An RNA of 177 nucleotides, treated with 2A3 and DMS and read out base by base. Values cover nucleotides 27 to 126. It was measured as part of the RMDB library OK1LIB. For 2A3, 5,294 sequencing reads were counted. Conditions: 150 mM KOAc, 10 mM MgCl2 and 150 mM bicine (pH 8.5), 24 C.

[RMDB]
RNA sequence: GGGAACGACUCGAGUAGAGUCGAAAACGUCGAGAGCUGCGGGAUAGGGAUGGUCCGGUGGCAUCCGGUAGUCGAUACCGUAACAAAUCAUCCCGAGCCGGUUUGCCUGUAGCCGUGUGCUCUCACGCAUUAGGGCGCAUUUCGAUGCGCCCUAAUGAAAAGAAACAACAACAACAAC
Reactivity to 2A3 in 0.01 (KOAc 150mM, MgCl2 10mM, bicine 150mM(pH8.5), 24C), signal-to-noise 6, nucleotides 027 to 126: c030g010u160c190g000a000g000a000g020c030u030g000c000g000g040g050a090u140a080g010g000g060a070u090g050g040u040c010c020g030g010u090g020g020c010a050u070c040c000g000g010u050a050g090u150c150g040a110u040a070c010c000g040u060a090a040c050a060a100a050u120c080a030u060c040c000c000g000a010g020c000c000g050g000u070u100u160g100c010c000u040g020u070a060g070c010c000g020u070g110u120g010c000u010c010u000c010a000c000g000
Reactivity to DMS in 0.01 (KOAc 150mM, MgCl2 10mM, bicine 150mM(pH8.5), 24C), signal-to-noise 3, nucleotides 027 to 126: c020g020u010c140g000a000g000a020g020c000u020g000c000g000g000g000a100u010a140g020g020g000a070u020g010g000u010c020c040g000g000u020g010g020c100a060u030c160c020g000g030u010a040g000u070c220g000a200u010a050c040c020g000u000a100a110c120a120a060a080u010c060a060u000c020c000c010g010a150g000c000c000g000g000u010u020u020g010c030c040u000g020u010a090g010c000c000g000u000g000u060g020c000u010c010u000c010a010c010g000